Conditions: 150 mM KOAc, 10 mM MgCl2 and 150 mM bicine (pH 8.5), 24 C. The record gives the reactivity of an RNA of 177 nucleotides to DMS and 2A3. For DMS the reverse transcriptase was MarathonRT.
RNA sequence: GGGAACGACUCGAGUAGAGUCGAAAAGAAAAAGAGGCAGAGCCUUUGCUCUCAUACACCCCAUUGUAUUGGGUGGAUUGCUCUGUUAUACACUGUGGGCAGGUUACUUAGGAUGUCCUCAGAGAAACAGUACGGAUGCGUUCGCGCAUCCGUACUGAAAAGAAACAACAACAACAAC
Reactivity to DMS in 0.01 (KOAc 150mM, MgCl2 10mM, bicine 150mM(pH8.5), 24C), signal-to-noise 1, nucleotides 027 to 126: g040a140a090a040a020a020g010a060g060g010c020a020g000a030g000c020c110u000u000u000g000c110u070c000u000c090a000u000a120c000a000c300c130c090c030a110u020u060g010u000a010u000u000g030g000g040u040g000g000a150u000u010g000c000u030c000u000g050u000u000a200u040a130c300a110c000u000g030u000g000g050g010c000a000g000g000u040u000a190c140u060u000a010g000g000a150u000g000u040c020c000u000c000a000g000a060g000a200a100a080
Reactivity to 2A3 in 0.01 (KOAc 150mM, MgCl2 10mM, bicine 150mM(pH8.5), 24C), signal-to-noise 1, nucleotides 027 to 126: g040a000a010a050a000a000g130a080g000g070c080a020g000a000g040c000c000u020u050u270g050c080u000c000u000c000a000u000a020c010a070c000c040c060c070a080u040u130g050u120a140u060u300g000g000g000u050g030g040a030u010u020g000c000u000c000u000g040u000u000a050u000a000c100a000c070u000g000u020g050g000g000c000a000g110g180u110u120a030c050u070u160a150g150g000a030u040g000u000c000c000u000c000a000g000a000g130a000a100a000